Conditions: 150 mM KOAc, 10 mM MgCl2 and 150 mM bicine (pH 8.5), 24 C. The record gives the reactivity of an RNA of 177 nucleotides to 2A3 and DMS. The DMS profile rests on 951 reads. 2A3 is a SHAPE reagent: it acylates the 2'-hydroxyl of flexible nucleotides of all four kinds.
[RMDB]
RNA sequence: GGGAACGACUCGAGUAGAGUCGAAAACGUCUUAAAUUAAAUUUCCCUUGCUGAGCUCAUCUCAGCAAACAAUAACAAAUAACAAAUAAGUACAGCAGGGAAGGUUGUUCUUAUUUGUUACAAUUAAUUCAUACGAAGGAUUCGUCCUUCGUAUGAAAAAAGAAACAACAACAACAAC
Reactivity to 2A3 in 0.01 (KOAc 150mM, MgCl2 10mM, bicine 150mM(pH8.5), 24C), signal-to-noise 2, nucleotides 027 to 126: c040g060u070c100u200u220a090a170a210u120u120a040a180a170u040u150u040c000c000c030u020u010g000c010u000g000a010g000c060u060c150a200u110c110u000c010a000g020c000a000a000a000c000a010a110u210a060a020c070a100a120a040u040a020a010c000a000a000a000u000a000a000g000u010a010c000a000g030c010a010g130g100g090a090a020g110g000u000u010g000u050u010c000u010u000a000u010u000u010g000u000u000a010c000a010a020u130u200a030a100
Reactivity to DMS in 0.01 (KOAc 150mM, MgCl2 10mM, bicine 150mM(pH8.5), 24C), signal-to-noise 2, nucleotides 027 to 126: c260g000u010c090u010u010a030a070a090u000u000a060a080a210u020u010u000c010c010c010u000u000g000c000u000g000a000g000c300u020c290a110u000c000u010c000a000g000c000a000a020a090c200a120a070u010a020a070c170a070a130a180u010a010a000c000a010a040a020u000a030a000g010u000a000c000a010g000c000a060g020g040g010a130a110g010g000u000u000g000u000u000c010u010u000a010u000u000u000g000u000u000a020c080a070a160u010u000a080a120